RNA sequence: GGGAACGACUCGAGUAGAGUCGAAAAUCAUUAGGCUAAUAACACUUAUUUGCAUUCUUAUCAUGCCGGCAGCUCUCCCUUAAACACUGUUUCUACUACUACUCCUUUACUCUAAGUUUCCACGGGACAGGGAAAAGUUGUUCGCAACUUUUCCCUGAAAAGAAACAACAACAACAAC
Reactivity to 2A3 in 0.01 (KOAc 150mM, MgCl2 10mM, bicine 150mM(pH8.5), 24C), signal-to-noise 3, nucleotides 027 to 126: u070c070a110u090u150a040g000g050c000u070a090a040u110a170a000c050a040c150u090u080a120u080u100u090g030c070a070u060u000c030u120u120a100u070c030a040u070g020c030c020g040g000c000a000g030c000u010c020u030c020c000c000u020u070a090a120a000c060a030c020u050g060u090u030u040c000u020a020c000u010a040c010u010a020c020u050c000c000u000u060u060a070c010u000c000u020a030a030g000u040u030u000c010c010a010c050g090g020g010a060
Reactivity to DMS in 0.01 (KOAc 150mM, MgCl2 10mM, bicine 150mM(pH8.5), 24C), signal-to-noise 1, nucleotides 027 to 126: u040c070a080u010u030a080g010g070c070u000a120a060u020a120a150c090a130c090u070u040a100u010u020u030g000c000a040u000u000c060u000u010a010u010c060a110u000g010c000c090g000g000c000a040g000c020u000c060u000c000c020c050u020u000a000a100a100c190a140c100u000g000u000u000u020c010u000a040c030u000a070c050u000a020c090u000c020c020u000u000u000a010c000u020c030u020a170a120g000u010u000u000c000c020a210c110g000g020g020a180
Structure probing data (2A3 and DMS) for a 177-nucleotide construct. The DMS profile rests on 1,449 reads. The 2A3 profile rests on 1,843 reads.